The record gives the reactivity of an RNA of 177 nucleotides to DMS and 2A3. The 2A3 profile rests on 11,108 reads. For 2A3 the reverse transcriptase was SuperScript II with manganese. Conditions: 150 mM KOAc, 10 mM MgCl2 and 150 mM bicine (pH 8.5), 24 C. The DMS profile rests on 11,527 reads. It was measured as part of the RMDB library OK1LIB. Reactivities are given for positions 27 through 126.
[RMDB]
RNA sequence: GGGAACGACUCGAGUAGAGUCGAAAAAGGCUCUCCACCAAUCAUGCAGCCGUUGGGUCCGAACAGGACGCGGCACUCACGACCGUAUGGAGACUUGGACGCAGGCACUUGUCCCAUGUUCGGGCUGUCUCCCAAAUAGUUUCGACUAUUUGGGAGAAAAAGAAACAACAACAACAAC
Reactivity to DMS in 0.01 (KOAc 150mM, MgCl2 10mM, bicine 150mM(pH8.5), 24C), signal-to-noise 4, nucleotides 027 to 126: a040g000g000c010u010c010u010c010c030a120c060c060a070a100u030c060a070u020g020c110a110g010c030c020g030u010u010g000g000g020u000c000c010g000a070a040c100a120g000g000a020c050g010c040g000g000c040a040c080u010c040a040c130g010a100c050c080g010u010a090u020g000g000a060g000a080c050u000u000g010g010a050c050g020c070a040g000g000c030a060c050u000u020g000u000c010c010c070a110u010g000u020u000c020g000g000g000c030u000g010
Reactivity to 2A3 in 0.01 (KOAc 150mM, MgCl2 10mM, bicine 150mM(pH8.5), 24C), signal-to-noise 9, nucleotides 027 to 126: a000g050g010c020u020c000u030c020c010a060c020c020a040a080u120c040a030u130g090c050a020g030c020c030g010u030u130g120g010g010u000c000c020g010a070a030c040a080g000g030a020c030g000c010g010g000c030a010c040u070c010a060c080g150a140c020c040g060u090a060u100g040g010a060g010a070c010u040u060g050g010a020c020g020c070a030g030g010c020a030c080u050u090g020u030c020c010c010a070u080g020u020u040c030g000g020g000c010u030g020